[RMDB]
RNA sequence: GGGAACGACUCGAGUAGAGUCGAAAAUCUUGACACACCGGGCCUUUGAACUCGUAACGGGAAGACAGGUGUUCGGUAGACAGUACGAUGUCAAUUAAAAGGACCUGUGUGAGUAGAAGAGGUGGAAUCUCUGGUUCUCGUUCGCGAGGACCAGAGAAAAAGAAACAACAACAACAAC
Reactivity to DMS in 0.01 (KOAc 150mM, MgCl2 10mM, bicine 150mM(pH8.5), 24C), signal-to-noise 2, nucleotides 027 to 126: u000c010u000u010g000a130c020a070c000a040c000c040g020g010g000c000c010u000u000u010g000a100a040c010u000c020g010u010a030a030c060g010g020g000a120a070g030a020c050a140g000g030u020g020u010u000c020g000g000u020a100g000a140c120a090g000u010a030c020g000a070u010g010u010c040a090a090u030u020a030a030a030a010g000g010a020c000c000u000g000u000g000u000g000a120g020u010a030g020a060a060g000a010g000g020u010g030g000a110a160
Reactivity to 2A3 in 0.01 (KOAc 150mM, MgCl2 10mM, bicine 150mM(pH8.5), 24C), signal-to-noise 2, nucleotides 027 to 126: u040c000u020u080g050a010c010a000c000a000c040c030g000g000g020c000c000u000u000u040g030a040a010c000u000c000g000u070a090a020c040g030g020g010a070a000g080a060c090a090g060g130u100g110u160u040c020g030g070u070a070g050a100c010a010g030u070a000c050g020a070u110g050u070c020a020a070u050u150a020a040a000a000g010g000a010c000c000u000g000u020g010u000g000a000g010u050a050g030a150a020g020a030g030g050u120g080g070a060a060
About this RNA
The record gives the reactivity of an RNA of 177 nucleotides to DMS and 2A3. The reactions ran in a buffer of 150 mM KOAc, 10 mM MgCl2 and 150 mM bicine (pH 8.5), at 24 C.